[RMDB]
RNA sequence: GGGAACGACUCGAGUAGAGUCGAAAAUUCUUUUUUCUUUUCUGCUCAGGAGGUCAGGUGUGAACCACAGGAACCACGAGUUUAGUUCCGAGGAACCAACUGCGGUUCCAAGGGCUAAACACCCUCGGAAUUACACAAAGUUCGCUUUGUGUAAUUCAAAAGAAACAACAACAACAAC
Reactivity to 2A3 in 0.01 (KOAc 150mM, MgCl2 10mM, bicine 150mM(pH8.5), 24C), signal-to-noise 3, nucleotides 027 to 126: u040u070c040u120u180u020u010u030u020c010u050u090u020u010c010u030g010c010u030c020a110g000g200a040g010g160u030c040a060g090g020u070g040u040g120a060a030c020c010a030c020a050g030g040a030a040c030c000a020c050g060a080g030u000u030u000a020g000u300u290c000c000g000a020g000g000a010a010c000c020a040a090c170u300g120c120g080g000u000u020c000c000a000a010g000g000g000c000u000a010a000a000c000a040c000c000c000u020c070g100
Reactivity to DMS in 0.01 (KOAc 150mM, MgCl2 10mM, bicine 150mM(pH8.5), 24C), signal-to-noise 3, nucleotides 027 to 126: u000u000c010u000u000u000u000u010u000c000u000u000u000u000c010u000g000c030u010c010a060g000g010a060g020g000u000c040a040g020g010u000g020u010g000a080a050c020c010a040c020a070g010g010a020a040c030c000a030c040g010a070g010u010u010u000a020g000u000u000c000c010g000a300g000g000a000a010c000c000a080a050c190u000g020c140g020g010u000u000c000c000a040a160g000g000g000c010u000a040a040a070c080a240c030c010c000u000c170g020